[RMDB]
Chemical mapping of a 177-nucleotide RNA with 2A3 and DMS.
RNA sequence: GGGAACGACUCGAGUAGAGUCGAAAAAGGCUAAUCUAGAGUGGCAAUAGCGGGUUCCCCCCAAUACUACCCGCAGGUAGACCUUGGUGGAGAUGUCUAGUGAGGUAGAGCGACCGAUUGGGUGGCCGCACGGUAAAGGAUUCGUCCUUUACCGUGCAAAAGAAACAACAACAACAAC
Reactivity to 2A3 in 0.01 (KOAc 150mM, MgCl2 10mM, bicine 150mM(pH8.5), 24C), signal-to-noise 3, nucleotides 027 to 126: a000g080g000c010u050a060a060u060c060u110a060g010a050g160u070g030g000c010a050a100u060a090g020c020g000g020g020u090u100c000c000c010c000c000c020a020a020u130a130c020u020a000c000c000c020g020c020a000g060g050u020a020g020a060c010c020u040u100g030g050u130g110g080a080g010a080u100g030u020c020u020a090g060u030g050a060g050g030u020a020g010a020g100c020g060a030c030c020g080a100u060u110g000g000g020u070g060g000c000c040
Reactivity to DMS in 0.01 (KOAc 150mM, MgCl2 10mM, bicine 150mM(pH8.5), 24C), signal-to-noise 3, nucleotides 027 to 126: a070g000g000c040u010a070a070u020c060u010a070g000a060g020u000g000g030c040a110a070u020a110g000c020g000g020g020u020u010c030c030c000c020c030c020a110a040u020a120c060u000a030c000c000c080g060c100a040g030g020u030a060g000a070c030c040u050u050g000g000u020g000g000a080g000a080u080g010u040c010u010a050g000u000g000a080g020g000u000a000g020a110g020c080g010a150c080c040g010a140u020u050g040g000g050u010g000g000c020c100
The data come from the RNA Mapping Database (RMDB), library RFM100. Conditions: 150 mM KOAc, 10 mM MgCl2 and 150 mM bicine (pH 8.5), 24 C.